[RMDB]
RNA sequence: GGGAACGACUCGAGUAGAGUCGAAAACAUCGUUCUGAUCAUCUGAAGAUCAGCUAUUAGAAGAGAAAGAUCAGUUAAGUCCUUUGGACCUGAUCAGCUUGAUACAAGAACUACUGAUUUCAACUUCAAAACGGGUGCUACUUCGGUAGCACCCGAAGGUAAGAUCUAUCUUCGGAUAGAUCUUACCAAAAGAAACAACAACAACAAC
Reactivity to DMS in 0.01 (KOAc 150mM, MgCl2 10mM, bicine 150mM(pH8.5), 24C), signal-to-noise 2, nucleotides 027 to 156: c060a060u000c070g000u010u000c000u010g000a030u000c010a160u000c110u000g000a220a230g020a000u000c010a020g070c160u000a050u020u010a200g020a120a090g010a070g010a130a110a050g000a000u000c020a030g010u020u010a070a070g030u000c000c000u010u010u020g020g000a040c040c040u010g020a150u000c070a100g030c100u010u000g020a170u000a110c040a060a060g010a040a020c000u000a060c000u000g000a000u000u010u000c030a140a300c000u000u000c010a030a050a120a140c000g030g060g030u000g020c030u000a010c000u010u000c300g060g080u000a020g030c000a030c000c000c000g000a000a010
Reactivity to 2A3 in 0.01 (KOAc 150mM, MgCl2 10mM, bicine 150mM(pH8.5), 24C), signal-to-noise 6, nucleotides 027 to 156: c030a070u140c080g070u180u060c020u020g020a010u020c010a020u010c100u210g090a150a050g000a060u010c010a010g010c020u100a160u270u150a080g020a070a020g020a010g060a090a090a000g050a020u000c000a000g010u070u090a170a020g000u010c020c000u090u200u300g040g010a030c010c030u060g030a100u060c040a010g020c000u030u090g020a020u060a160c050a070a020g020a070a000c020u070a010c030u130g020a050u020u090u030c070a090a040c010u060u050c020a020a020a100a060c020g000g020g010u000g000c000u000a000c000u030u060c170g070g000u010a000g010c000a000c000c000c000g000a010a000